RNA sequence: GGGAACGACUCGAGUAGAGUCGAAAAUCACUAUCAUGAGAUCGGCUCAGGAAGGACCCGCCCCUAUAAUUCAAUCACCUCCCCACUGGGUUCCUCCCACCACAUGUGGGAAUUGUGGUAGUUACAAUUCAAGAUGAGAUUUGGGUGGGGACACAGCAUCCUUCUUCCUUUUCGAAGGAAGAAGGAUAAAAGAAACAACAACAACAAC
Reactivity to 2A3 in 0.01 (KOAc 150mM, MgCl2 10mM, bicine 150mM(pH8.5), 24C), signal-to-noise 3, nucleotides 027 to 156: u070c010a030c060u110a100u260c040a100u120g030a030g000a060u060c010g010g000c030u010c020a020g080g030a100a030g030g030a040c000c000c020g050c030c010c000c030u110a110u150a260a300u200u200c130a060a160u120c030a150c030c050u020c040c000c000c000a000c000u000g000g010g000u030u060c020c020u000c000c000c000a020c020c000a090c010a130u170g000u070g020g060g000a010a010u030u030g000u020g000g040u040a050g030u080u110a030c030a050a050u040u110c030a060a050g070a160u120g030a040g020a080u070u110u110g000g000g000u060g000g000g010g050a000c070a000c010a050g080c000
Reactivity to DMS in 0.01 (KOAc 150mM, MgCl2 10mM, bicine 150mM(pH8.5), 24C), signal-to-noise 1, nucleotides 027 to 156: u000c030a120c040u000a100u000c020a080u010g010a100g000a180u000c060g010g000c030u000c020a070g010g000a090a070g020g020a130c050c020c000g020c020c010c010c080u000a070u000a080a130u000u010c100a140a150u000c020a060c020c090u000c020c000c040c020a130c060u000g030g000g010u000u010c020c030u000c070c000c000a110c030c040a100c110a060u030g030u000g020g020g000a070a020u000u000g000u000g020g040u020a070g020u010u010a120c030a040a070u010u010c040a060a130g010a050u010g010a090g000a110u000u010u010g040g010g050u000g000g040g030g000a100c050a020c040a140g020c050